[RMDB]
RNA sequence: GGGAACGACUCGAGUAGAGUCGAAAAGAUAUGGAACCGCGACAUGAUUAGCCUCGGAAACGAGGUGGGAUCAACAGCGACGGUUCCUAAGUCAAAACAUUUAACCGCGUUCGCGCGGUUAAAUGAAUCUCAAGAUGUUGUUCGCAACAUCUUGAGAAAAAGAAACAACAACAACAAC
Reactivity to DMS in 0.01 (KOAc 150mM, MgCl2 10mM, bicine 150mM(pH8.5), 24C), signal-to-noise 2, nucleotides 027 to 126: g000a040u000a300u000g000g010a010a010c000c000g000c000g010a090c100a160u000g010a020u000u000a300g000c010c000u000c000g000g000a060a100a170c010g000a000g000g030u000g020g000g000a000u000c030a040a060c300a100g000c040g000a090c020g000g010u000u010c000c000u000a010a040g010u010c010a100a090a100a220c010a000u000u000u000a000a000c000c000g020c000g040u000u000c300g000c000g020c010g000g000u000u000a000a000a000u000g000a070a140
Reactivity to 2A3 in 0.01 (KOAc 150mM, MgCl2 10mM, bicine 150mM(pH8.5), 24C), signal-to-noise 1, nucleotides 027 to 126: g000a000u040a030u100g010g030a000a010c010c000g060c000g030a200c100a190u160g000a030u030u000a000g020c000c020u010c020g000g010a000a090a000c010g020a000g000g000u030g000g100g010a000u010c050a090a110c040a100g120c030g300a300c010g160g010u000u000c000c000u020a100a000g030u030c060a040a000a030a160c010a040u000u020u020a000a010c030c010g000c050g000u040u070c300g010c020g020c000g000g020u000u000a000a000a000u000g000a000a010